[RMDB]
RNA sequence: GGGAACGACUCGAGUAGAGUCGAAAAGCGACCUGUGCGAGGCAGCCGAGGCCGUGCGGCCCGAGGAACGCAAGACCUGCCGGAACCCCGCCUGCGGGCCCCAGUGGGAGAUGUCGGAGUGGUCCGACCAGCGAUUAUCGUUCGCGAUAAUCGCUGGAAAAGAAACAACAACAACAAC
Reactivity to DMS in 0.01 (KOAc 150mM, MgCl2 10mM, bicine 150mM(pH8.5), 24C), signal-to-noise 1, nucleotides 027 to 126: g040c070g000a190c050c030u000g000u000g020c040g020a150g070g010c050a080g030c010c030g000a090g010g010c030c080g030u040g000c090g000g020c040c060c020g020a140g000g030a080a050c060g010c080a090a080g060a070c050c010u000g040c070c040g020g020a140a220c040c030c010c030g000c040c030u010g000c060g010g000g000c060c000c000c050a060g020u000g010g030g010a070g000a070u000g020u000c030g000g000a070g020u040g040g040u010c030c040g000a050
Chemical mapping of a 177-nucleotide RNA with DMS.
Conditions: 150 mM KOAc, 10 mM MgCl2 and 150 mM bicine (pH 8.5), 24 C.
DMS adducts were read by reverse transcription with MarathonRT.
Values cover nucleotides 27 to 126.